[RMDB]
RNA sequence: GGGAACGACUCGAGUAGAGUCGAAAAGGCAGCCGCCGCCGCACAUCUGCCGCCACAGCCUCCGCCGGCUACCCGAACGUUCUCGGGGCCAGCGCCGAGUGGAUCACCGGGGACCGCGAGGCACCCGCGUAAGGCGAAGGUUCGCCUUCGCCUUACGAAAAGAAACAACAACAACAAC
Reactivity to DMS in 0.01 (KOAc 150mM, MgCl2 10mM, bicine 150mM(pH8.5), 24C), signal-to-noise 2, nucleotides 027 to 126: g020g040c020a140g020c060c030g000c030c020g000c000c010g040c060a040c070a070u020c070u020g000c060c020g000c010c040a080c130a120g020c030c030u000c030c030g020c050c030g010g020c060u000a170c000c000c000g000a050a150c170g000u000u020c020u000c000g010g000g000g010c000c000a100g000c040g000c050c060g000a070g040u000g000g000a140u010c050a040c070c020g000g020g000g000a110c100c020g040c130g020a080g000g020c130a100c040c000c010g010
Reactivity to 2A3 in 0.01 (KOAc 150mM, MgCl2 10mM, bicine 150mM(pH8.5), 24C), signal-to-noise 3, nucleotides 027 to 126: g040g010c020a020g040c020c030g000c000c010g030c000c000g070c000a040c010a100u080c050u050g030c030c000g000c010c010a070c010a020g020c000c010u060c010c020g050c020c030g000g030c010u110a130c000c000c000g030a070a050c100g100u220u070c020u000c030g000g000g020g010c050c030a030g000c020g020c030c020g020a040g020u060g030g040a080u070c040a040c090c030g000g010g010g030a020c020c000g010c010g010a030g010g000c010a070c010c000c000g010

Structure probing data (DMS and 2A3) for a 177-nucleotide construct. For 2A3, 3,724 sequencing reads were counted. The data come from the RNA Mapping Database (RMDB), library OK1LIB. Reactivities are rounded to 0.1 and cut off at 0 and 3.